The data come from the RNA Mapping Database (RMDB), library OK1LIB. This 177-nucleotide RNA was probed chemically with 2A3 and DMS. The RNA was probed in 150 mM KOAc, 10 mM MgCl2 and 150 mM bicine (pH 8.5) at 24 C. The 2A3 profile rests on 11,172 reads.

RNA sequence: GGGAACGACUCGAGUAGAGUCGAAAACUUCAAUUCAGAAUCGUGUGAGGUUCAGGAACGUGCAGCCGCCCUAUACAAUGGCACCGAGGCGGAUUCGAACCUCCGAUCGGUGCAGGCACCUUGGAACCAUAUGACUACGGUUCGCCGUAGUCAUAUGAAAAGAAACAACAACAACAAC
Reactivity to 2A3 in 0.01 (KOAc 150mM, MgCl2 10mM, bicine 150mM(pH8.5), 24C), signal-to-noise 2, nucleotides 027 to 126: c030u120u080c060a070a160u140u080c080a070g130a120a080u120c030g030u060g090u090g220a070g030g010u030u030c050a030g060g050a110a050c060g020u060g040c020a010g020c010c010g060c010c000c000u100a120u030a100c110a090a120u090g100g000c010a010c010c000g010a020g160g210c010g010g010a020u080u110c070g070a080a080c010c010u000c000c000g000a010u010c010g000g000u000g000c010a030g050g000c020a040c000c020u050u050g070g040a030a050c020
Reactivity to DMS in 0.01 (KOAc 150mM, MgCl2 10mM, bicine 150mM(pH8.5), 24C), signal-to-noise 6, nucleotides 027 to 126: c060u020u030c060a100a100u010u040c060a090g000a060a050u000c070g020u020g000u010g000a070g000g020u010u010c050a080g000g010a070a050c090g010u000g000c060a100g010c030c040g000c020c000c030u000a100u040a100c170a060a090u020g020g000c000a020c020c010g000a040g000g000c010g000g000a030u020u040c180g020a100a080c270c200u010c000c010g000a110u000c000g000g000u000g010c000a060g020g000c050a050c070c070u000u000g010g000a070a110c170

The DMS profile rests on 12,633 reads.